Chemical mapping of a 177-nucleotide RNA with DMS and 2A3. The RNA was probed in 150 mM KOAc, 10 mM MgCl2 and 150 mM bicine (pH 8.5) at 24 C. For DMS the reverse transcriptase was MarathonRT.
RNA sequence: GGGAACGACUCGAGUAGAGUCGAAAAAGAGCCGACGAACCUACCAACCUUCCAACCUUCCAACCUUCCAACCUUCCAACCUUCCAAUCUACUCGAGAGGAGGAGGAGGAGGAGGAGGAGGACAUAAGAUAGAGUGACUAUUCGUAGUCACUCUAUCAAAAGAAACAACAACAACAAC
Reactivity to DMS in 0.01 (KOAc 150mM, MgCl2 10mM, bicine 150mM(pH8.5), 24C), signal-to-noise 3, nucleotides 027 to 126: a080g010a070g010c000c020g020a060c090g010a080a090c060c020u000a060c070c020a060a100c060c030u000u010c030c020a140a070c110c020u000u000c050c050a080a150c050c020u000u000c030c030a090a090c020c000u010u000c030c030a100a050c070c020u000u000c020c010a100a260u000c000u000a040c060u010c030g000a010g000a220g000g000a120g010g000a110g000g000a110g020g020a140g020g010a100g000g000a160g000g000a100g020g000a300c290a020u000a060a070
Reactivity to 2A3 in 0.01 (KOAc 150mM, MgCl2 10mM, bicine 150mM(pH8.5), 24C), signal-to-noise 3, nucleotides 027 to 126: a000g080a030g040c040c010g030a050c040g000a060a050c010c000u030a030c020c010a030a070c020c020u040u010c020c030a090a090c020c010u030u000c020c020a090a100c020c010u050u000c020c010a120a120c050c000u020u010c010c030a070a070c040c010u100u010c010c000a050a080u010c010u040a070c040u050c070g020a020g010a030g040g010a020g020g020a040g020g020a050g010g040a070g010g050a030g000g030a020g000g030a010g010g000a020c030a100u190a030a040